An RNA of 177 nucleotides, treated with 2A3 and read out base by base. The reactions ran in a buffer of 150 mM KOAc, 10 mM MgCl2 and 150 mM bicine (pH 8.5), at 24 C. 2A3 is a SHAPE reagent: it acylates the 2'-hydroxyl of flexible nucleotides of all four kinds.
RNA sequence: GGGAACGACUCGAGUAGAGUCGAAAAGCACUAAAUCUUUCCCAGGCCUGCUGCUUGGUGCCGGUCUGGGGACAGACAGUGCUAUACUAGAGCAGAGGAAAUCCAGACAGGUCGUUUCCAUCUGCCUUAGCUUUUCCGCCUUCGGGCGGAAAAGCUAAAAAGAAACAACAACAACAAC
Reactivity to 2A3 in 0.01 (KOAc 150mM, MgCl2 10mM, bicine 150mM(pH8.5), 24C), signal-to-noise 1, nucleotides 027 to 126: g000c000a000c000u000a000a170a000u000c000u000u000u000c000c000c000a000g000g030c000c000u030g000c050u060g080c140u090u300g100g130u060g090c000c000g000g000u000c000u000g000g000g020g000a000c000a030g000a000c060a000g020u020g000c000u010a010u000a060c060u090a110g020a040g000c000a000g000a000g000g050a000a000a000u000c090c000a020g100a290c100a060g100g090u140c090g060u010u000u010c000c040a140u020c000u050g000c000c000u000